[RMDB]
RNA sequence: GGGAACGACUCGAGUAGAGUCGAAAACACGAAGGUUGGCUAAUCCUGGUCGGACAUCAGGAGGUUAGUGCAGUGGCAUAAGCCAUCUUGGCGCUAAUAGAUACUAAUCGUAGCAUAGCUGAAUAAAAAUAUGGCUCCUAUUCGUAGGAGCCAUAUUAAAAGAAACAACAACAACAAC
Reactivity to 2A3 in 0.01 (KOAc 150mM, MgCl2 10mM, bicine 150mM(pH8.5), 24C), signal-to-noise 4, nucleotides 027 to 126: c060a010c030g080a130a040g100g040u080u040g040g000c030u020a050a070u020c000c000u020g000g050u060c080g090g100a050c040a080u020c000a020g000g000a010g020g010u020u010a000g000u010g000c000a020g020u010g010g000c040a130u120a300a080g000c000c000a010u070c090u110u100g140g000c000g000c010u010a020a030u050a100g070a010u120a090c040u090a100a070u060c030g020u050a020g040c040a110u040a060g050c010u040g090a110a070u210a070a100a010
Reactivity to DMS in 0.01 (KOAc 150mM, MgCl2 10mM, bicine 150mM(pH8.5), 24C), signal-to-noise 4, nucleotides 027 to 126: c090a100c140g010a140a210g000g010u010u010g010g010c020u000a020a130u000c020c010u000g020g010u000c160g010g010a300c100a030u020c030a030g000g020a040g000g010u000u000a010g010u000g000c020a090g010u020g000g010c000a160u050a090a140g000c000c000a030u030c060u010u020g010g030c000g000c010u020a010a010u010a040g000a090u000a070c130u030a070a050u010c060g020u000a020g000c060a120u010a030g000c000u010g000a110a100u010a010a100a060